[RMDB]
Source: RMDB library M2RFPK, as collected in RNAgym. Structure probing data (DMS and 2A3) for a 207-nucleotide construct. For 2A3, 2,921 sequencing reads were counted. For 2A3 the reverse transcriptase was SuperScript II with manganese. The RNA was probed in 150 mM KOAc, 10 mM MgCl2 and 150 mM bicine (pH 8.5) at 24 C.

RNA sequence: GGGAACGACUCGAGUAGAGUCGAAAAAGAUGGCAGGUUCACCCCGUACGGUGCGGAAGUUCGCCCUUCCGUGAAACGCGAAAAUCGGACGGUGGCUGCAAGUCGCAUCGCAAAACCGCGGCAAGUGUUAACCUGGACCUCUUCGGAGGUCCAGGAAGUUGUUUCAAUAGUUCGCUAUUGAAACAACAAAAGAAACAACAACAACAAC
Reactivity to DMS in 0.01 (KOAc 150mM, MgCl2 10mM, bicine 150mM(pH8.5), 24C), signal-to-noise 2, nucleotides 027 to 156: a050g040a100u000g010g030c020a090g040g020u000u040c040a140c020c020c020c020g040u010a040c040g020g050u010g000c010g000g010a060a050g000u000u000c220g010c190c200c010u000u010c010c010g030u000g010a050a070a060c070g000c070g000a070a060a110a080u000c010g010g010a030c050g000g010u000g030g000c010u000g000c060a060a090g010u010c020g020c020a100u000c060g000c110a100a090a060a150c040c060g040c010g010g030c050a100a100g000u000g000u000u000a090a170c020c000u000g020g000a010c000c000u010c000u000u010c280g020g010a010g050g010u000c000c000a010g000g000a010a040
Reactivity to 2A3 in 0.01 (KOAc 150mM, MgCl2 10mM, bicine 150mM(pH8.5), 24C), signal-to-noise 4, nucleotides 027 to 156: a000g120a100u150g040g020c020a020g070g010u170u190c020a050c000c000c010c010g000u020a010c030g010g050u040g000c010g000g000a010a010g030u090u220c070g080c030c000c010u010u000c010c000g020u010g040a160a150a010c160g020c020g130a080a020a010a080u100c000g010g020a010c070g000g030u030g010g020c010u020g000c020a030a030g000u000c010g010c030a060u070c060g010c110a110a100a070a050c070c040g000c000g000g000c060a070a060g040u040g040u250u110a060a050c000c000u010g000g000a000c010c000u020c000u050u020c070g080g000a000g000g010u010c000c000a000g000g000a000a000